An RNA of 177 nucleotides, treated with DMS and 2A3 and read out base by base. Values cover nucleotides 27 to 126. The 2A3 profile rests on 1,982 reads. Conditions: 150 mM KOAc, 10 mM MgCl2 and 150 mM bicine (pH 8.5), 24 C.
RNA sequence: GGGAACGACUCGAGUAGAGUCGAAAACUAUAGCACUUCGGUGCUAUAGAAAAGAAAGCUCCAAAAGGAGCAAACGACUGCAAGAAAAACUGUCGUAAUGCAAAACCUUUCCCUUCGGGGAAAGGAACAAGUUACAAUUCUUCGGAAUUGUAACUUGAAAAGAAACAACAACAACAAC
Reactivity to DMS in 0.01 (KOAc 150mM, MgCl2 10mM, bicine 150mM(pH8.5), 24C), signal-to-noise 1, nucleotides 027 to 126: c000u010a030u000a000g020c000a000c060u000u010c190g050g000u000g020c000u000a000u000a030g000a040a090a100a240g000a090a120a130g000c010u000c000c030a030a010a110a170g030g000a020g020c010a000a080a040c010g000a000c020u000g000c080a040a130g010a130a160a120a100a050c070u020g010u010c000g010u000a220a030u000g000c200a040a050a170a120c010c000u000u000u000c000c000c000u000u000c160g050g010g020g000a000a010a010g020g000a000a020
Reactivity to 2A3 in 0.01 (KOAc 150mM, MgCl2 10mM, bicine 150mM(pH8.5), 24C), signal-to-noise 1, nucleotides 027 to 126: c000u010a000u000a020g020c000a010c000u000u020c240g060g000u000g000c000u000a010u000a020g010a000a040a000a000g070a030a130a010g000c010u000c020c000a070a250a030a300g000g000a000g020c000a060a040a000c000g020a010c020u070g120c300a130a140g130a260a180a060a020a010c010u010g000u010c000g010u040a070a060u120g050c050a020a030a070a220c000c010u000u000u000c000c000c000u000u020c150g010g000g010g000a000a000a000g000g010a000a000